[RMDB]
RNA sequence: GGGAACGACUCGAGUAGAGUCGAAAAAAUCAAUGCUUGAUCUCAAAUCCACAAUGGUCACUGUGUUGGGAUAUUCUCUUUGUUGCACACUGAGAACAUGCACGCUGGUGCACAGGAUCCUUGAAGCACAGGCUGACAUUUUCGAAUGUCAGCCUGUAAAAGAAACAACAACAACAAC
Reactivity to DMS in 0.01 (KOAc 150mM, MgCl2 10mM, bicine 150mM(pH8.5), 24C), signal-to-noise 1, nucleotides 027 to 126: a080a080u000c030a050a090u020g010c100u000u000g030a070u000c010u010c060a090a080a140u010c070c120a020c140a090a050u000g000g010u000c030a070c070u010g000u000g010u000u000g010g000g000a040u000a070u000u020c010u000c010u030u000u000g000u000u010g030c160a300c020a040c000u000g000a040g000a110a030c080a040u000g040c070a100c090g010c150u020g000g010u000g000c020a070c090a070g010g000a040u000c030c030u000u000g000a080a160g040c140
Reactivity to 2A3 in 0.01 (KOAc 150mM, MgCl2 10mM, bicine 150mM(pH8.5), 24C), signal-to-noise 1, nucleotides 027 to 126: a000a000u110c070a050a030u060g000c040u000u010g010a070u000c040u040c110a120a120a040u060c020c030a040c010a100a070u070g000g000u020c010a080c200u010g040u010g120u180u150g090g050g000a090u060a090u120u020c010u010c000u010u000u040g090u080u210g080c050a010c000a000c060u010g000a000g020a080a010c040a030u110g000c060a010c080g110c190u200g160g040u090g000c010a030c010a040g000g070a040u000c010c010u040u120g050a030a000g020c070